[RMDB]
RNA sequence: GGGAACGACUCGAGUAGAGUCGAAAAUGGUCUGAUGAUUUCGUCAUGGACGCAUUGGCCACCGGUCGCAGGAUCAAGUGCCUUACCUGCGUAGACGACUUCACGAAGGAAUGCCUGACGGUCACUGUGCGGUACCUGGAUUCGUCCAGGUACCGCAAAAAGAAACAACAACAACAAC
Reactivity to DMS in 0.01 (KOAc 150mM, MgCl2 10mM, bicine 150mM(pH8.5), 24C), signal-to-noise 1, nucleotides 027 to 126: u000g010g020u000c010u010g010a040u020g000a110u000u000u000c040g030u040c050a150u000g030g030a040c020g030c030a090u000u000g010g000c030c030a060c180c090g010g000u000c030g000c300a080g000g010a030u000c060a110a090g000u000g000c030c030u020u010a130c100c140u010g000c060g000u000a110g000a040c050g000a040c050u000u000c000a070c080g000a110a110g000g010a050a020u010g010c000c020u000g000a090c170g030g010u000c040a000c120u000g010

Structure probing data (DMS) for a 177-nucleotide construct. Conditions: 150 mM KOAc, 10 mM MgCl2 and 150 mM bicine (pH 8.5), 24 C. DMS adducts were read by reverse transcription with MarathonRT. Reactivities are given for positions 27 through 126.